[RMDB]
Structure probing data (2A3 and DMS) for a 177-nucleotide construct. For 2A3, 1,895 sequencing reads were counted. The DMS profile rests on 1,882 reads. The RNA was probed in 150 mM KOAc, 10 mM MgCl2 and 150 mM bicine (pH 8.5) at 24 C. The data come from the RNA Mapping Database (RMDB), library OK2TST.
RNA sequence: GGGAACGACUCGAGUAGAGUCGAAAAUGCUUUAGAGAGUCCUGCUGACCUGGGAAGGAGUGUCACUGACAUUCAGUAGGGCGUCCAACAUAAAUCUGCCGCUGCUUUCUUCUCAAAGGACUGGGUACCAUGGGAAAAUGUUCGCAUUUUCCCAUGGAAAAGAAACAACAACAACAAC
Reactivity to 2A3 in 0.01 (KOAc 150mM, MgCl2 10mM, bicine 150mM(pH8.5), 24C), signal-to-noise 2, nucleotides 027 to 126: u040g010c000u130u150u170a090g060a010g000a000g100u000c000c000u030g000c050u050g050a050c010c010u030g000g010g030a010a010g000g030a040g030u010g020u030c050a160c300u170g000a010c000a050u070u020c010a060g030u010a010g000g050g000c010g040u010c030c020a110a050c040a100u270a130a080a040u070c100u120g000c000c010g100c080u010g010c020u020u080u040c020u000u010c000u000c000a110a090a040g040g010a030c030u060g000g060g000u110a130
Reactivity to DMS in 0.01 (KOAc 150mM, MgCl2 10mM, bicine 150mM(pH8.5), 24C), signal-to-noise 3, nucleotides 027 to 126: u010g010c080u000u000u000a090g000a260g010a070g010u000c000c020u000g020c070u020g020a180c090c070u000g000g020g010a080a030g020g010a080g010u000g010u000c030a160c170u000g010a030c040a010u000u010c050a080g020u000a050g020g020g020c030g010u010c080c070a080a090c130a130u000a040a070a080u000c080u010g010c060c020g010c030u000g030c030u010u010u010c020u000u000c020u000c020a030a100a060g030g030a040c030u000g000g010g030u010a180